[RMDB]
RNA sequence: GGGAACGACUCGAGUAGAGUCGAAAAGUAGCGUCGCUACCGUACAAGUAUCUACAAGUAGUCAAUAAAAGAGAACGUAGUAGAUUGCUGGCUACGUUUAAUUGGACAAGUAUAGCUGAGGGUGUUAAAGCGAUCUCAAAUUCGUUUGAGAUCGCUUAAAAGAAACAACAACAACAAC
Reactivity to DMS in 0.01 (KOAc 150mM, MgCl2 10mM, bicine 150mM(pH8.5), 24C), signal-to-noise 2, nucleotides 027 to 126: g000u000a030g000c040g030u010c170g020c010u000a000c010c040g000u000a170c190a070a130g000u000a030u000c040u010a020c060a080a110g010u000a070g000u000c030a130a100u000a090a090a080a090g020a300g030a010a010c000g000u000a020g020u030a080g020a300u010u010g030c090u000g030g000c020u000a000c000g000u000u000u000a020a160u000u000g020g000a080c150a060a040g030u000a090u000a050g010c070u000g000a120g030g010g020u010g010u000u000a020
Reactivity to 2A3 in 0.01 (KOAc 150mM, MgCl2 10mM, bicine 150mM(pH8.5), 24C), signal-to-noise 1, nucleotides 027 to 126: g030u020a000g050c070g280u130c190g070c120u010a010c000c020g060u060a080c000a040a070g000u020a080u100c030u000a010c000a150a000g040u070a020g020u020c060a030a170u120a230a300a040a000g160a000g000a000a000c000g000u000a000g010u000a020g070a160u070u160g190c110u120g090g000c000u000a000c000g000u020u020u020a040a060u130u070g050g000a010c020a050a020g150u060a060u060a160g060c030u040g060a180g090g090g040u080g090u140u140a070